This 177-nucleotide RNA was probed chemically with 2A3. For 2A3 the reverse transcriptase was SuperScript II with manganese. The RNA was probed in 150 mM KOAc, 10 mM MgCl2 and 150 mM bicine (pH 8.5) at 24 C. High 2A3 reactivity points to a flexible backbone, as in loops and unpaired stretches.
[RMDB]
RNA sequence: GGGAACGACUCGAGUAGAGUCGAAAAACUGGGACUACUUCUGGGCAACCGGAGGCGGACUCGGACGGAAUCUGAUCGUAACGUCUUUGGCAGGAUUGCUUUACCGCUUUCCGUCUGGCAAACAUUUCCUCAUGCUGUAUUUCGAUACAGCAUGAGGAAAAGAAACAACAACAACAAC
Reactivity to 2A3 in 0.01 (KOAc 150mM, MgCl2 10mM, bicine 150mM(pH8.5), 24C), signal-to-noise 2, nucleotides 027 to 126: a000c030u070g000g040g060a040c000u030a040c010u110u000c020u040g000g000g050c030a020a060c010c000g040g000a010g000g000c030g000g030a070c020u000c040g000g030a010c020g100g000a060a150u070c070u070g040a070u060c030g020u120a090a050c030g020u020c000u020u020u110g030g000c060a080g060g020a080u090u050g020c010u060u010u050a110c030c000g000c080u040u030u010c000c000g030u040c000u020g100g020c090a090a030a030c030a110u010u000u000